[RMDB]
RNA sequence: GGGAACGACUCGAGUAGAGUCGAAAAUUCGCUCUGAUGUCUCCAGUGGUGACAGUACCUGCCGCUCUGUUCUUCCAGAGUCUGUGGGGCACCCUGCUCCGCCAGGUGCUGCUGGUAACAGGCUCUGCGGAAGACAUGGAUUCGUCCAUGUCUUCCGAAAAGAAACAACAACAACAAC
Reactivity to DMS in 0.01 (KOAc 150mM, MgCl2 10mM, bicine 150mM(pH8.5), 24C), signal-to-noise 2, nucleotides 027 to 126: u010u000c070g020c030u000c040u010g010a060u010g000u000c020u000c050c040a060g040u000g000g030u000g010a110c080a060g010u000a080c060c030u010g000c050c070g000c030u000c020u010g020u010u000c080u020u010c150c000a020g000a030g020u000c020u010g030u000g010g020g000g000c010a030c030c050c030u000g010c010u010c170c140g020c140c010a000g010g010u000g010c110u000g010c010u000g030g000u020a120a050c000a020g020g000c010u000c010u000g000
Reactivity to 2A3 in 0.01 (KOAc 150mM, MgCl2 10mM, bicine 150mM(pH8.5), 24C), signal-to-noise 1, nucleotides 027 to 126: u030u000c040g010c020u000c040u090g060a080u070g040u040c020u050c070c000a030g070u010g050g050u050g030a040c050a060g010u050a060c000c020u060g020c020c030g040c050u030c020u080g080u110u020c020u110u000c020c030a000g000a000g020u040c010u000g040u030g050g120g030g040c000a020c020c000c000u040g000c030u080c050c040g160c150c010a020g010g000u000g030c090u010g000c010u020g010g120u040a080a000c010a010g010g000c000u000c000u020g000